An RNA of 207 nucleotides, treated with DMS and 2A3 and read out base by base. For 2A3, 11,612 sequencing reads were counted. The reactions ran in a buffer of 150 mM KOAc, 10 mM MgCl2 and 150 mM bicine (pH 8.5), at 24 C. The data come from the RNA Mapping Database (RMDB), library OK3TST. For 2A3 the reverse transcriptase was SuperScript II with manganese. For DMS, 9,046 sequencing reads were counted.
RNA sequence: GGGAACGACUCGAGUAGAGUCGAAAAAUGACUCCGUAGAACAGGCGGGUUCUGUACACGUGGUGUCGAGCAGACAGACCGCUUUCGUUCACCACGGACACGUCCACGCGGUGCGUUCGCCCGGUACGAGCCAGGCGAUGAGUCACCACGCUCACCAACCAUACCUAAAAUUCGUUUUAGGUAUGGUAAAAGAAACAACAACAACAAC
Reactivity to DMS in 0.01 (KOAc 150mM, MgCl2 10mM, bicine 150mM(pH8.5), 24C), signal-to-noise 3, nucleotides 027 to 156: a080u000g010a160c020u000c000c010g030u000a120g030a060a080c040a070g010g000c020g030g000g010u000u000c020u000g010u000a120c120a130c040g030u000g010g000u010g010u000c050g000a110g000c030a120g020a150c110a120g000a200c010c020g000c020u010u000u000c070g000u000u000c010a090c020c060a030c010g000g010a090c070a050c050g020u000c000c070a060c010g020c020g000g010u000g030c020g030u000u000c000g000c010c010c000g040g030u000a040c280g020a300g030c010c000a030g020g030c020g020a020u010g000a170g000u000c000a040c000c020a020c030g000c020u000c040a100c040c030a160
Reactivity to 2A3 in 0.01 (KOAc 150mM, MgCl2 10mM, bicine 150mM(pH8.5), 24C), signal-to-noise 8, nucleotides 027 to 156: a000u110g020a030c040u000c020c000g020u020a020g020a060a010c030a020g030g000c010g010g020g020u120u040c010u040g020u070a070c090a040c130g140u120g060g090u130g110u190c090g020a040g040c050a020g040a080c010a030g090a070c030c020g000c000u040u080u070c060g010u020u010c010a020c030c050a000c010g010g010a010c030a010c110g040u010c030c000a020c030g000c020g020g000u010g000c030g050u020u010c000g000c000c010c010g000g020u120a180c190g030a080g030c010c010a000g000g000c010g010a020u050g040a040g090u140c000a000c010c000a020c010g020c000u060c020a080c030c020a040